Source information
An RNA of 177 nucleotides, treated with 2A3 and DMS and read out base by base. The data come from the RNA Mapping Database (RMDB), library TTRINS. Conditions: 150 mM KOAc, 10 mM MgCl2 and 150 mM bicine (pH 8.5), 24 C. The 2A3 profile rests on 2,295 reads. For 2A3 the reverse transcriptase was SuperScript II with manganese.

[RMDB]
RNA sequence: GGGAACGACUCGAGUAGAGUCGAAAAGAUAUGGAGCAACGGUUGCUCAUCGUUGAAAGACCACAGAGUAUCGGAAACGAUACUCUGUGGUCUGGAGAUGAGAACUACAACACGUUGCUCCUAAGUCGUAAAACCAUAACUUCGGUUAUGGUUUUACAAAAGAAACAACAACAACAAC
Reactivity to 2A3 in 0.01 (KOAc 150mM, MgCl2 10mM, bicine 150mM(pH8.5), 24C), signal-to-noise 1, nucleotides 027 to 126: g010a010u110a070u300g000g000a000g000c000a000a010c000g030g000u000u030g040c000u010c030a030u010c020g240u300u110g020a070a030a010g050a000c000c000a000c000a000g010a000g020u000a000u000c010g010g110a190a040a050c030g020a010u010a030c020u010c010u020g000u000g000g000u000c000u000g000g000a000g010a010u010g010a010g000a010a010c190u300a030c070a000a000c280a060c300g050u070u000g000c000u020c010c010u000a010a010g020u010c050
Reactivity to DMS in 0.01 (KOAc 150mM, MgCl2 10mM, bicine 150mM(pH8.5), 24C), signal-to-noise 5, nucleotides 027 to 126: g010a090u000a300u010g000g000a000g010c000a000a000c000g000g000u000u000g000c000u000c020a010u000c000g010u010u020g010a300a110a020g000a010c000c000a010c000a020g010a010g010u000a000u000c010g020g010a150a110a280c000g020a010u000a010c000u010c000u000g000u000g000g010u000c000u000g000g000a180g010a020u000g010a020g000a120a040c120u020a300c010a000a000c010a060c020g020u000u000g000c000u000c010c000u000a010a080g020u010c080